RNA sequence: GGGAACGACUCGAGUAGAGUCGAAAACACAUAAACUGUUACAUUGAAAAGUGCUUCAUACUUUCUGAGCCCUUAACUCACUAGGUUGUAGGCCCUGGGCUAAGAAUAUAGCUGAGGGGGCUGAUGUAUUUCCUUCAUUGCUCAGCUGCUCCUACAGCAAUAAGGGUCAGUUCGCUGACCCUUAUUGAAAAGAAACAACAACAACAAC
Reactivity to 2A3 in 0.01 (KOAc 150mM, MgCl2 10mM, bicine 150mM(pH8.5), 24C), signal-to-noise 4, nucleotides 027 to 156: c060a010c010a040u180a100a170a040c070u060g030u130u100a060c050a090u160u120g030a100a080a010a010g040u040g020c020u100u150c040a080u100a230c060u070u090u100c080u060g040a030g000c000c010c010u040u050a080a010c010u020c140a070c100u050a030g030g030u070u030g050u050a030g010g050c000c010c010u030g050g000g000c010u000a020a010g040a060a060u230a030u070a100g010c030u060g070a040g030g020g030g000g020c030u010g010a030u120g020u030a090u010u120u070c040c000u060u100c070a090u090u100g000c000u000c000a010g010c000u030g020c060u120c060c020u060a060c020a010g050
Reactivity to DMS in 0.01 (KOAc 150mM, MgCl2 10mM, bicine 150mM(pH8.5), 24C), signal-to-noise 2, nucleotides 027 to 156: c060a050c050a100u000a100a060a120c070u020g010u000u000a070c050a080u020u000g000a100a070a160a110g010u000g020c040u010u010c040a140u000a060c030u010u000u010c020u000g020a010g050c000c040c130u000u010a030a040c030u000c020a060c040u000a050g000g020u000u010g010u000a130g080g020c010c000c050u000g020g000g030c000u000a020a160g010a090a140u010a080u000a040g020c020u010g000a150g010g030g010g040g000c030u000g010a060u000g020u000a100u010u000u010c020c030u000u000c070a090u000u000g010c030u000c080a170g010c010u000g010c020u000c000c020u000a090c060a110g000
Structure probing data (2A3 and DMS) for a 207-nucleotide construct.
Values are in units of 0.01, from 0 to 300, in steps of 10.
For 2A3, 1,696 sequencing reads were counted.
2A3 adducts were read by reverse transcription with SuperScript II with manganese.